An RNA of 177 nucleotides, treated with DMS and read out base by base.
RNA sequence: GGGAACGACUCGAGUAGAGUCGAAAAGUUAUACAUUAAUAAAGGAGAAAAAUGUGCUCUGUACUUUAAUGUCCUGGGAUUUAUAGUGUAAACAAUCCAUGAGAAUUUACUUAUAGGGAAAGCACAAUGAUAAAAGCCUAUUCGUAGGCUUUUAUCAAAAAGAAACAACAACAACAAC
Reactivity to DMS in 0.01 (KOAc 150mM, MgCl2 10mM, bicine 150mM(pH8.5), 24C), signal-to-noise 1, nucleotides 027 to 126: g010u000u000a070u010a140c010a040u000u010a070a030u000a050a130a260g010g010a080g000a090a110a130a080a060u000g000u010g000c010u000c000u000g030u000a090c120u010u000u000a000a040u000g000u000c030c010u000g020g010g000a160u000u010u000a040u000a060g000u000g000u000a060a050a040c060a040a050u000c090c070a100u000g000a070g010a120a080u000u000u000a050c030u000u000a040u010a090g000g000g000a110a020a120g010c060a050c030a070a120
Reactivities are rounded to 0.1 and cut off at 0 and 3. Conditions: 150 mM KOAc, 10 mM MgCl2 and 150 mM bicine (pH 8.5), 24 C.